[RMDB]
Source: RMDB library RNAMAK, as collected in RNAgym.
An RNA of 207 nucleotides, treated with DMS and read out base by base.
The RNA was probed in 150 mM KOAc, 10 mM MgCl2 and 150 mM bicine (pH 8.5) at 24 C.

RNA sequence: GGGAACGACUCGAGUAGAGUCGAAAAGGGGUCAACUUACUAUGAGGCUUUCACCUCAUACGCCCAUUAAGACAUGCUCUGAAGCCUCCACGGAGCAACAGCUUAAUGGGCGUAUGAGGUGAAAGCUACCCACCAUAGAAGUUGACGGAGGCACCCACUAGCUAAUGAUGUUCGCAUCAUUAGCUAGAAAAGAAACAACAACAACAAC
Reactivity to DMS in 0.01 (KOAc 150mM, MgCl2 10mM, bicine 150mM(pH8.5), 24C), signal-to-noise 2, nucleotides 027 to 156: g020g040g050g000u000c000a020a010c040u000u010a140c020u000a030u010g000a140g010g000c000u000u010u010c030a000c010c000u010c010a010u000a000c000g000c010c000c010a020u010u000a010a010g000a050c050a300u010g030c020u000c010u000g000a060a180g030c030c020u000c010c030a300c030g000g000a030g000c010a040a070c080a160g020c010u000u000a010a040u010g000g020g000c000g000u010a000u010g000a000g010g040u000g010a000a010a000g030c020u000a000c020c000c050a300c050c010a040u020a050g000a030a040g030u000u000g000a020c020g020g020a020g000g000c040a240c020c000c000a260
Values cover nucleotides 27 to 156.